Structure probing data (2A3 and DMS) for a 177-nucleotide construct. For DMS, 7,673 sequencing reads were counted. DMS adducts were read by reverse transcription with MarathonRT.

RNA sequence: GGGAACGACUCGAGUAGAGUCGAAAAUCAAAGACGCGGGUAGUGCUGGCGUUCGCAGUCGUCGCGAUCGUGGCGAUGGGCAUAGGCAUGGGCGUUGGACCUGUGAGCGCACAAGACGGGGGUACCCCAAUCCGAAACGAUUCGUCGUUUCGGAUUGAAAAGAAACAACAACAACAAC
Reactivity to 2A3 in 0.01 (KOAc 150mM, MgCl2 10mM, bicine 150mM(pH8.5), 24C), signal-to-noise 2, nucleotides 027 to 126: u040c020a000a060a030g120a040c040g020c070g050g020g070u060a110g070u060g150c020u050g080g000c020g040u060u090c010g010c000a000g000u070c010g030u030c020g000c010g070a130u130c100g020u040g020g060c030g010a050u080g060g080g020c050a020u120a090g040g000c020a020u070g010g040g000c060g030u070u120g130g010a020c010c000u030g020u030g040a020g040c010g010c030a020c010a190a050g040a000c060g020g000g030g030g020u040a020c000c000c000
Reactivity to DMS in 0.01 (KOAc 150mM, MgCl2 10mM, bicine 150mM(pH8.5), 24C), signal-to-noise 5, nucleotides 027 to 126: u010c050a100a130a120g010a090c120g020c100g000g010g010u010a060g020u010g020c040u000g020g030c030g010u010u000c030g030c010a130g010u000c100g020u000c030g010c020g010a060u000c100g030u010g010g010c020g010a080u000g010g000g010c040a040u000a160g020g010c030a050u010g000g020g000c040g010u000u000g020g010a060c050c010u000g020u000g000a080g010c040g000c030a080c080a050a070g000a080c070g010g000g000g010g010u000a140c020c010c020